[RMDB]
RNA sequence: GGGAACGACUCGAGUAGAGUCGAAAAGCUUACGCCGCAGGGCUGCCAGCUCGCCGGCGUGCUCGAGGCGCUCGACGGCGCCGGGCUGCCGCUCUAUGACGACGUUACGGUGCAGAUUCCGAGGCGCAAGAUCACCUCAGUUCGCUGAGGUGAUCUUAAAAGAAACAACAACAACAAC
Reactivity to DMS in 0.01 (KOAc 150mM, MgCl2 10mM, bicine 150mM(pH8.5), 24C), signal-to-noise 1, nucleotides 027 to 126: g010c040u000u000a060c040g000c010c010g000c130a240g000g010g010c000u000g010c070c060a140g010c090u000c040g020c130c010g000g010c010g000u000g020c030u000c020g000a220g020g010c000g010c000u000c060g000a120c190g000g000c000g010c020c010g010g010g020c010u000g010c070c030g020c130u020c180u010a090u010g000a050c030g010a100c090g000u000u000a150c180g000g020u000g020c020a040g010a060u000u000c020c010g010a120g010g030c020g010c090
Reactivity to 2A3 in 0.01 (KOAc 150mM, MgCl2 10mM, bicine 150mM(pH8.5), 24C), signal-to-noise 1, nucleotides 027 to 126: g030c020u080u080a020c000g020c010c000g090c110a030g050g030g010c000u040g010c040c030a000g020c030u030c020g010c020c020g040g000c030g080u060g000c000u030c020g120a100g060g070c030g050c030u050c070g290a080c080g020g000c000g000c000c000g050g000g000c000u010g000c060c020g000c040u010c050u130a180u090g110a160c030g010a010c040g070u050u140a080c080g080g050u190g060c020a020g000a110u140u010c020c010g000a020g020g060c000g030c010
The record gives the reactivity of an RNA of 177 nucleotides to DMS and 2A3.
The RNA was probed in 150 mM KOAc, 10 mM MgCl2 and 150 mM bicine (pH 8.5) at 24 C.